[RMDB]
RNA sequence: GGGAACGACUCGAGUAGAGUCGAAAAAAAAAGAAAAUAUACAUAACAUGUACUGUUUUAGCCAUUUUUAAGUGUGCGGUUCAGUGGUAUUCAGUACAUCCACAUUAUCAUACACCUGUCACUACUGCAUCACAUAUUCGUUCGCGAAUAUGUGAUGAAAAGAAACAACAACAACAAC
Reactivity to 2A3 in 0.01 (KOAc 150mM, MgCl2 10mM, bicine 150mM(pH8.5), 24C), signal-to-noise 1, nucleotides 027 to 126: a000a000a000a030a030g080a100a100a050a010u300a050u080a070c060a060u300a180a040c010a050u030g010u020a000c020u000g080u080u020u170u130a010g030c060c000a050u040u170u030u000u170a230a040g060u050g020u000g140c080g090g030u050u080c060a040g030u020g000g000u020a050u030u070c020a000g000u020a000c010a000u000c010c000a110c030a000u110u080a040u180c020a000u000a070c040a020c070c000u020g000u000c010a050c210u080a070c050u070g040
Reactivity to DMS in 0.01 (KOAc 150mM, MgCl2 10mM, bicine 150mM(pH8.5), 24C), signal-to-noise 2, nucleotides 027 to 126: a040a020a060a080a070g020a050a020a000a090u030a090u020a120c060a090u000a100a090c060a230u000g010u000a020c030u010g000u000u000u000u020a080g010c000c010a030u000u030u010u020u040a010a130g060u000g010u000g020c000g000g010u020u000c120a040g030u000g000g000u000a030u000u020c020a020g000u020a030c030a050u000c060c040a030c060a060u060u000a080u020c070a070u000a070c110a120c020c070u000g010u000c060a070c070u000a070c130u000g000